[RMDB]
RNA sequence: GGGAACGACUCGAGUAGAGUCGAAAACAGGUGAAUUAAAUCGGCACAGGCUUGGCUGGGAGUCAUCUUCCAUGAUGUGAACUUUCUGUUUUUUGAGCUCCAGAAUGAGCCCCAGUUGGGGUCAGUGGCUCAUGCCUGUAAUCCCGGCAUUUUGGGACAUAGUAGCGGGAUUCGUCCCGCUACUAUGAAAAGAAACAACAACAACAAC
Reactivity to DMS in 0.01 (KOAc 150mM, MgCl2 10mM, bicine 150mM(pH8.5), 24C), signal-to-noise 1, nucleotides 027 to 156: c000a050g010g000u010g010a140a170u020u000a030a110a100u010c050g030g040c020a090c010a050g010g030c020u000u010g010g020c000u000g030g030g010a020g010u000c070a060u000c040u000u010c040c040a140u000g010a130u000g030u000g020a030a070c030u000u000u000c040u010g000u000u000u000u000u000u020g020a070g030c020u000c090c030a130g010a030a040u000g000a140g000c000c000c010c000a110g000u000u010g030g040g010g030u000c050a050g050u000g010g000c020u000c060a090u000g010c010c030u000g000u000a080a090u000c000c000c010g000g010c040a100u020u000u010u000g000g010g020a300
Reactivity to 2A3 in 0.01 (KOAc 150mM, MgCl2 10mM, bicine 150mM(pH8.5), 24C), signal-to-noise 2, nucleotides 027 to 156: c010a010g000g020u050g090a100a150u300u160a200a130a100u160c070g030g000c010a040c020a100g040g000c030u050u090g020g000c010u020g060g000g000a040g110u050c010a040u030c030u300u100c060c040a060u270g020a040u020g050u040g140a080a080c000u050u080u080c010u080g140u030u040u030u030u040u180g060a040g020c010u040c080c020a060g060a110a080u070g030a100g050c020c000c000c010a110g070u180u200g060g010g000g000u030c040a030g040u040g060g010c000u000c060a010u050g010c000c010u010g000u040a030a010u000c010c000c000g020g010c060a050u030u080u080u150g000g000g000a010